RNA sequence: GGGAACGACUCGAGUAGAGUCGAAAACAUGCUGUCCAGCCUCUGCUUCCUGGGCGCCAUCGCCGUGGACCGCUACAUCUCCAUCUUCUACGCACUGCGCUACCACAGCAUCGUGACCCUGCCGCGGGCGCGGCGAGCCGUUGCGGCCAUCUGGGUACGUAAAUUAAAUAUUCGUAUUUAAUUUACGAAAAGAAACAACAACAACAAC
Reactivity to DMS in 0.01 (KOAc 150mM, MgCl2 10mM, bicine 150mM(pH8.5), 24C), signal-to-noise 3, nucleotides 027 to 156: c040a110u010g020c020u000g020u000c050c020a200g010c030c020u000c030u000g010c060u000u010c020c030u030g020g010g020c010g000c040c100a120u000c000g030c020c020g000u000g020g010a050c050c030g010c020u010a080c100a160u010c050u010c030c030a100u010c060u000u000c040u000a120c070g000c160a090c030u000g000c010g010c030u000a110c040c040a050c030a050g000c040a060u000c060g040u000g010a090c010c010c020u000g030c030c060g010c030g010g000g020c060g000c030g020g000c000g020a050g030c040c020g030u000u000g030c000g030g000c030c050a090u010c030u010g020g020g020u000a170
Reactivity to 2A3 in 0.01 (KOAc 150mM, MgCl2 10mM, bicine 150mM(pH8.5), 24C), signal-to-noise 7, nucleotides 027 to 156: c030a040u090g010c020u050g030u060c040c040a020g010c020c010u050c030u060g040c030u080u040c020c020u050g020g020g020c020g010c040c020a070u050c010g010c010c000g030u030g020g050a160c020c010g010c020u080a050c040a120u060c050u010c080c010a100u040c070u190u030c040u080a050c050g010c010a050c050u080g020c030g010c070u070a080c020c040a050c010a050g030c010a060u110c040g050u030g080a090c010c000c010u040g030c040c040g000c000g030g010g010c030g000c000g020g000c000g010a010g000c020c030g080u100u130g010c010g030g020c000c010a070u030c040u070g030g000g040u090a040